[RMDB]
RNA sequence: GGGAACGACUCGAGUAGAGUCGAAAACUGUGUUUAAGUACUGGUGGUUCCGUCCACUGGUGCACUCGCUUGGCACCUAAGCAGUGUUCCGUCAUUGCUUAGUGUGGAAACAACGUUCUGUCGUUGUGAUACAAAAUAAGUUCGCUUAUUUUGUAUCAAAAGAAACAACAACAACAAC
Reactivity to 2A3 in 0.01 (KOAc 150mM, MgCl2 10mM, bicine 150mM(pH8.5), 24C), signal-to-noise 9, nucleotides 027 to 126: c030u040g010u010g050u090u060u100a140a020g010u010a000c000u020g020g000u010g000g020u200u300c060c050g060u100c020c010a000c000u000g000g000u000g000c010a020c010u030c010g070c060u090u140g140g030c010a000c000c000u010a000a000g000c000a010g000u010g020u210u240c060c060g150u190c020a000u000u010g000c000u000u000a010g000u030g000u010g220g100a060a170a010c010a010a000c010g030u140u050c090u170g200u160c020g020u020u030g030u020
Reactivity to DMS in 0.01 (KOAc 150mM, MgCl2 10mM, bicine 150mM(pH8.5), 24C), signal-to-noise 9, nucleotides 027 to 126: c040u000g020u000g000u000u000u000a040a040g030u000a000c010u000g010g030u000g000g000u000u020c300c200g000u010c000c000a010c000u000g010g020u000g020c000a050c030u000c030g010c070u010u000g010g000c010a010c010c000u000a010a010g000c000a010g030u000g000u000u010c290c190g000u010c000a010u000u000g000c000u000u000a000g000u020g030u000g010g000a080a100a080c010a010a020c000g010u000u010c150u000g010u010c010g010u000u000g010u000

The data come from the RNA Mapping Database (RMDB), library RFMREP. The record gives the reactivity of an RNA of 177 nucleotides to 2A3 and DMS. Reactivities are rounded to 0.1 and cut off at 0 and 3. DMS adducts were read by reverse transcription with MarathonRT. For DMS, 25,346 sequencing reads were counted.